[RMDB]
RNA sequence: GGGAACGACUCGAGUAGAGUCGAAAAUGUGUCCGUCGGCGUAGCCGACAACAUGCCCAGGUAGCCCAGACCUUCAAGGCUACGGUGCGUUGCGACGCACGGUCUGAUUCUUCACAACGACGUUCACAAGAUCGGAUCACUUUCGAGUGAUCCGAAAACUAAUAUUAAGGUUCGCCUUAAUAUUAGUAAAAGAAACAACAACAACAAC
Reactivity to DMS in 0.01 (KOAc 150mM, MgCl2 10mM, bicine 150mM(pH8.5), 24C), signal-to-noise 3, nucleotides 027 to 156: u000g030u000g000u000c030c100g060u000c000g030g000c010g040u010a160g010c010c010g000a110c000a040a000c010a010u000g010c010c020c030a100g020g020u010a020g000c000c000c200a100g030a090c040c020u020u010c140a090a300g010g020c010u000a030c000g020g000u000g010c000g020u000u010g000c190g040a120c020g020c030a050c030g030g020u000c010u010g000a230u000u000c090u000u040c090a110c050a100a080c030g000a100c030g000u000u000c050a120c030a090a070g000a140u000c010g030g010a050u020c010a000c000u000u000u010c230g030a030g010u000g010a010u000c010c010g000a000a000a040
Reactivity to 2A3 in 0.01 (KOAc 150mM, MgCl2 10mM, bicine 150mM(pH8.5), 24C), signal-to-noise 6, nucleotides 027 to 156: u110g000u000g020u080c100c060g010u020c020g000g030c240g150u190a100g000c000c000g010a000c000a000a000c000a020u080g000c000c000c010a010g020g000u010a000g000c020c050c090a010g000a010c020c000u020u010c020a010a000g000g000c000u000a000c010g000g000u010g000c010g000u030u070g050c230g130a010c000g000c000a000c000g000g000u000c000u000g010a020u100u080c080u120u150c100a060c050a240a080c130g170a030c070g090u070u120c100a050c030a150a070g040a220u020c010g010g010a000u000c000a010c010u050u070u130c170g030a020g000u000g000a000u010c020c000g000a000a000a000

An RNA of 207 nucleotides, treated with DMS and 2A3 and read out base by base. As a SHAPE reagent, 2A3 marks flexible, mostly unpaired nucleotides at the ribose 2'-OH. It was measured as part of the RMDB library M2RFPK. Values cover nucleotides 27 to 156.